[RMDB]
RNA sequence: GGGAACGACUCGAGUAGAGUCGAAAAUGAGUACGCUGCUCUGACCUUCUUCCCAGUCUCGGUUCCUGUUCUGGGAGCUUGGGGCUGAGUAGCCACCAGCCCUGCUCUCUGCAGUGUUCUAUUGUGGUCUACGCAUUUGAUUCGUCAAAUGCGUAGAAAAAGAAACAACAACAACAAC
Reactivity to DMS in 0.01 (KOAc 150mM, MgCl2 10mM, bicine 150mM(pH8.5), 24C), signal-to-noise 5, nucleotides 027 to 126: u020g010a070g010u010a050c080g010c040u000g010c010u000c030u010g000a080c060c030u010u010c090u010u000c020c010c010a140g000u000c020u000c070g000g000u000u010c020c010u000g010u010u010c090u000g010g010g000a010g000c020u030u010g020g000g000g020c010u000g000a050g010u030a110g000c080c090a110c060c010a020g000c000c000c000u010g000c010u000c020u000c000u000g010c050a050g010u010g010u010u000c050u010a150u020u020g000u010g000g010
Reactivity to 2A3 in 0.01 (KOAc 150mM, MgCl2 10mM, bicine 150mM(pH8.5), 24C), signal-to-noise 8, nucleotides 027 to 126: u130g000a010g040u040a040c050g020c060u060g020c010u030c030u040g100a110c010c000u050u050c020u030u020c010c000c000a030g080u030c020u030c070g040g000u030u010c000c000u050g040u140u150c060u090g010g000g000a000g010c010u090u250g030g000g000g000c010u000g010a010g020u020a030g040c030c010a020c000c000a000g000c000c000c010u030g000c000u000c000u010c020u030g000c010a030g010u020g050u150u010c050u050a160u050u150g050u050g050g050

Structure probing data (DMS and 2A3) for a 177-nucleotide construct.